[RMDB]
RNA sequence: GGGAACGACUCGAGUAGAGUCGAAAAUACCUACUGCAACAGUUGUUAAAAGUACAAGUGCUUCUAGUAACACUGUUAAACCAGUAGCAUCUGGUUGGAAACGUAAUAAUUACGGCACUUAUUAUAACUACCUAAAUGUGUUCGCACAUUUAGGUAGAAAAGAAACAACAACAACAAC
Reactivity to DMS in 0.01 (KOAc 150mM, MgCl2 10mM, bicine 150mM(pH8.5), 24C), signal-to-noise 4, nucleotides 027 to 126: u000a190c020c000u000a080c140u000g000c100a060a020c070a060g000u000u020g010u000u000a020a060a050a110g010u000a070c140a060a040g020u010g000c010u000u000c160u010a050g020u000a030a040c070a040c040u010g000u000u010a100a040a020c040c000a010g000u000a150g040c250a080u010c010u000g010g000u000u010g020g010a090a080a050c090g010u010a050a100u010a090a100u000u000a020c150g020g000c020a020c030u000u000a080u020u000a110u010a070a150
Reactivity to 2A3 in 0.01 (KOAc 150mM, MgCl2 10mM, bicine 150mM(pH8.5), 24C), signal-to-noise 4, nucleotides 027 to 126: u090a020c000c000u060a070c080u120g060c040a120a020c020a100g010u040u020g010u030u070a090a120a040a040g040u060a050c030a110a020g000u010g010c000u040u090c040u110a030g030u020a050a010c010a000c060u010g020u020u050a020a010a000c010c010a010g010u060a080g170c030a070u100c010u000g010g000u030u030g050g100a110a080a010c030g010u050a040a120u100a180a060u170u060a010c000g010g000c010a000c000u010u000a030u090u090a050u030a040a080